[RMDB]
RNA sequence: GGGAACGACUCGAGUAGAGUCGAAAAAGCUUAAUGAUAUUACACCACUUGGGAGGAUAAAAUCAAUUAAAAAAUUGCAUCUCCGUCAGAGACAUGAUGUCAGAAGGCCUACAGAAGGAUUCAGGAGACACAAUACGUCCUUCGGGACGUAUUGUGUAAAAGAAACAACAACAACAAC
Reactivity to DMS in 0.01 (KOAc 150mM, MgCl2 10mM, bicine 150mM(pH8.5), 24C), signal-to-noise 2, nucleotides 027 to 126: a070g000c030u000u030a070a080u010g010a100u000a050u010u000a150c080a100c070c040a200c090u040u000g030g000g000a120g000g000a140u070a090a050a140a050u000c000a010a070u110u060a000a070a080a040a040a120u030u000g000c170a040u000c000u000c000c110g030u030c040a080g000a030g070a040c050a140u000g000a050u000g010u030c070a000g040a110a140g000g010c050c010u020a060c050a080g000a030a080g000g000a050u000u000c060a180g030g000a100g000
Reactivity to 2A3 in 0.01 (KOAc 150mM, MgCl2 10mM, bicine 150mM(pH8.5), 24C), signal-to-noise 2, nucleotides 027 to 126: a020g010c010u070u010a060a010u040g010a020u000a040u070u050a040c110a010c080c000a020c110u080u080g010g010g010a020g030g010a030u140a070a080a010a010u090c040a010a110u070u230a000a050a040a040a020a030u020u080g030c020a000u010c010u000c020c000g120u150c080a060g080a000g030a050c010a020u260g000a020u080g020u020c000a000g000a070a050g040g000c000c010u090a060c090a030g200a250a000g030g020a080u050u130c040a000g100g040a110g060
The data come from the RNA Mapping Database (RMDB), library OK1LIB. Chemical mapping of a 177-nucleotide RNA with DMS and 2A3. 2A3 adducts were read by reverse transcription with SuperScript II with manganese. The RNA was probed in 150 mM KOAc, 10 mM MgCl2 and 150 mM bicine (pH 8.5) at 24 C.